[RMDB]
RNA sequence: GGGAACGACUCGAGUAGAGUCGAAAAAACUCAGCUAGGGAGAGUAUAACAUUCAUGUUGACGAGACCUAGACGAAACACAGAGGAAAUUUAUUAAUCACUGGAUAGUAUUAGUAAUGACUCUGUGUAAAACUCUUCUACGUUCGCGUAGAAGAGAAUCUUAUAUAUUGCUUCGGCAAUAUAUAAGAAAAAGAAACAACAACAACAAC
Reactivity to DMS in 0.01 (KOAc 150mM, MgCl2 10mM, bicine 150mM(pH8.5), 24C), signal-to-noise 2, nucleotides 027 to 156: a010a040c030u000c000a060g000c010u010a000g010g000g000a180g010a140g010u000a060u000a040a030c030a060u010u000c190a120u000g000u010u000g000a120c020g000a300g010a050c020c020u000a060g000a300c090g000a100a130a010c000a020c000a040g010a040g000g000a160a150a140u000u000u000a010u000u000a030a020u010c080a030c070u000g030g050a190u000a110g010u020a030u010u000a020g000u000a010a010u000g010a230c000u000c000u000g000u000g010u010a010a030a060a120c000u010c010u000u000c010u010a000c010g010u000u010c300g040c040g050u010a000g020a030a000g000a010g000a010a010
Reactivity to 2A3 in 0.01 (KOAc 150mM, MgCl2 10mM, bicine 150mM(pH8.5), 24C), signal-to-noise 3, nucleotides 027 to 156: a000a000c010u010c010a010g010c000u000a000g010g010g010a060g010a030g040u130a150u060a300a020c050a040u110u160c050a060u280g030u040u040g030a030c020g020a010g040a090c000c000u000a030g000a060c020g000a020a050a000c000a000c000a000g000a010g010g020a010a160a100u070u010u010a010u010u000a010a000u030c040a010c010u040g100g060a150u280a300g010u020a010u000u000a000g000u000a000a000u030g010a030c000u000c000u000g000u000g000u000a000a000a000a000c000u010c000u000u000c000u010a000c000g020u010u040c170g000c020g090u000a000g000a010a000g000a000g010a000a000